[RMDB]
RNA sequence: GGGAACGACUCGAGUAGAGUCGAAAAGAUAUGGAACGCUAUCAGGAGCUAUGAAGCCACUCAGUACUGUAUAUCGGAAACGAUAUACAGGAAGUGUGGUGGAGCUCCUGUAAGGCGUUCCUAAGUCCAAUAUGUUACGGUUCGCCGUAACAUAUUGAAAAGAAACAACAACAACAAC
Reactivity to DMS in 0.01 (KOAc 150mM, MgCl2 10mM, bicine 150mM(pH8.5), 24C), signal-to-noise 6, nucleotides 027 to 126: g010a090u000a180u010g000g000a010a000c000g020c010u010a300u010c010a010g000g010a020g020c000u000a300u000g010a140a300g000c000c000a000c000u000c010a050g010u000a170c000u000g000u010a000u000a000u000c000g010g000a080a030a130c000g010a010u000a000u000a000c000a000g000g010a090a200g000u000g000u000g000g010u000g000g000a010g010c000u000c000c000u000g000u000a020a110g010g000c000g010u000u000c000c000u010a010a070g010u000c030
Reactivity to 2A3 in 0.01 (KOAc 150mM, MgCl2 10mM, bicine 150mM(pH8.5), 24C), signal-to-noise 4, nucleotides 027 to 126: g000a020u060a040u110g010g000a020a000c000g000c010u030a050u300c010a010g020g000a000g000c010u070a270u300g020a010a000g010c000c010a010c010u020c000a040g050u060a030c010u000g010u000a000u000a000u000c010g000g020a040a030a020c000g000a000u010a000u000a010c000a000g010g010a020a020g300u050g000u010g000g010u020g000g000a000g000c010u010c000c000u000g000u010a000a010g050g000c010g000u000u000c000c000u000a000a000g000u000c000